[RMDB]
RNA sequence: GGGAACGACUCGAGUAGAGUCGAAAAGAAUGGCAGUUUGUCACUUGUAUAUUCUUGGCUAUGAGUAUACAUUUUGAGAGUUUUCUCUUGCAUUAUAUAUAGCUGUUUAUGCGUGUGACUUUACUGAGGGUCUAUGGUAGUUCGCUACCAUAGACCCAAAAGAAACAACAACAACAAC
Reactivity to 2A3 in 0.01 (KOAc 150mM, MgCl2 10mM, bicine 150mM(pH8.5), 24C), signal-to-noise 1, nucleotides 027 to 126: g280a050a150u130g100g070c010a000g000u010u000u000g000u000c000a000c020u080u190g000u000a000u000a000u020u010c060u080u070g010g020c000u010a000u020g040a060g050u020a020u020a040c100a140u080u090u180u150g000a020g010a000g010u070u070u300u090c010u000c000u000u010g090c030a020u100u000a000u020a000u000a000u000a000g000c000u010g000u020u010u000a000u000g000c040g000u000g020u020g000a000c000u040u020u020a000c000u000g060a120